[RMDB]
RNA sequence: GGGAACGACUCGAGUAGAGUCGAAAAGGCCAUGCGAUACCACGGGCCAUUGAAAUUCAGGCUCGGCGGUUUUCAUUUCAGGCGAGGGGACCGACGGAUCGUUCGUUACUCCAUGAGUGGCGAGCGGGUUUAUUAUGAUCUUCGGAUCAUAAUAAACAAAAGAAACAACAACAACAAC
Reactivity to 2A3 in 0.01 (KOAc 150mM, MgCl2 10mM, bicine 150mM(pH8.5), 24C), signal-to-noise 4, nucleotides 027 to 126: g050g000c010c020a060u090g030c040g030a020u000a080c000c000a000c000g000g000g000c000c010a010u010u180g090a120a130a140u240u160c080a030g030g000c000u000c000g040g010c060g020g000u080u030u050u100c020a030u040u080u180c050a000g010g010c020g020a030g030g020g000g020a020c040c020g030a040c030g060g040a100u100c010g010u010u000c000g000u010u010a000c000u020c100c070a110u300g020a000g010u000g000g000c010g000a000g020c010g000g010